[RMDB]
RNA sequence: GGGAACGACUCGAGUAGAGUCGAAAAUGCUGGUCUAUUAACGCGGCAAGACGCACUUUGAUCCAUGGGCGUGGCUAUGUUGCAUAGCGCGCGUCAAAAUUGCCUUCCAUGAUCGACGCGUGUUGAACAUUUUAAAUCGAUUCGUCGAUUUAAAAUGAAAAGAAACAACAACAACAAC
Reactivity to DMS in 0.01 (KOAc 150mM, MgCl2 10mM, bicine 150mM(pH8.5), 24C), signal-to-noise 9, nucleotides 027 to 126: u000g010c020u000g010g010u000c060u000a130u010u010a080a090c100g020c050g010g000c030a080a070g010a060c050g010c020a060c080u000u000u000g010a050u000c080c070a060u000g010g000g010c040g020u000g000g020c020u000a020u000g000u010u010g030c060a050u000a030g010c010g010c010g000c000g010u010c050a030a040a070a090u000u000g010c100c050u000u010c030c020a060u000g000a080u000c060g010a030c100g010c030g020u000g010u000u000g010a100a180
Reactivity to 2A3 in 0.01 (KOAc 150mM, MgCl2 10mM, bicine 150mM(pH8.5), 24C), signal-to-noise 8, nucleotides 027 to 126: u080g010c020u050g020g070u030c060u060a140u120u140a160a030c060g010c020g100g010c040a030a030g040a010c030g010c020a030c050u100u080u130g020a040u050c080c030a040u050g030g000g010c020g010u010g040g000c020u010a020u080g140u210u190g170c050a020u030a040g020c060g000c010g000c000g040u020c000a010a030a020a090u130u120g050c020c000u080u020c020c010a040u050g020a050u050c040g010a020c030g020c010g000u030g090u040u080g040a050a010

About this RNA
The data come from the RNA Mapping Database (RMDB), library OK2TST. The record gives the reactivity of an RNA of 177 nucleotides to DMS and 2A3. For DMS the reverse transcriptase was MarathonRT.